[RMDB]
RNA sequence: GGGAACGACUCGAGUAGAGUCGAAAAGGUAUCGUGCCACGGCAUGUUCCACCUUGGCCAUUUGGUCACGGUCCAGAUAGUCGACCGGAUCGCCGUGCACAUAGACGAUGCCGAUCGUCCGGAUAAACACUUCUGUCUGCUUCGGCGGACAGAAGUGAAAAGAAACAACAACAACAAC
Reactivity to 2A3 in 0.01 (KOAc 150mM, MgCl2 10mM, bicine 150mM(pH8.5), 24C), signal-to-noise 5, nucleotides 027 to 126: g010g010u020a000u030c010g010u050g100c080c010a000c010g000g000c050a070u220g040u030u020c000c000a030c020c020u040u030g010g000c000c020a070u080u060u300g020g000u030c010a010c120g020g040u000c020c000a030g050a110u120a030g060u070c040g010a020c030c050g010g020a010u020c040g000c000c000g000u000g020c030a010c000a020u140a000g110a010c020g010a000u020g010c000c010g000a030u080c030g040u000c010c010g030g040a130u210a040a040a020
Reactivity to DMS in 0.01 (KOAc 150mM, MgCl2 10mM, bicine 150mM(pH8.5), 24C), signal-to-noise 3, nucleotides 027 to 126: g000g000u010a010u000c000g010u010g000c180c000a010c010g000g010c010a120u050g010u010u000c040c040a100c130c110u000u000g000g030c020c000a190u000u030u010g000g040u010c030a040c060g000g010u000c010c050a100g000a060u010a070g000u010c060g030a090c230c070g000g000a070u000c130g010c000c010g000u000g010c050a100c180a070u070a070g010a040c040g000a030u000g010c020c000g000a080u000c150g000u010c010c020g000g000a060u030a040a050a170
Chemical mapping of a 177-nucleotide RNA with 2A3 and DMS. For DMS the reverse transcriptase was MarathonRT. The RNA was probed in 150 mM KOAc, 10 mM MgCl2 and 150 mM bicine (pH 8.5) at 24 C. The DMS profile rests on 6,403 reads.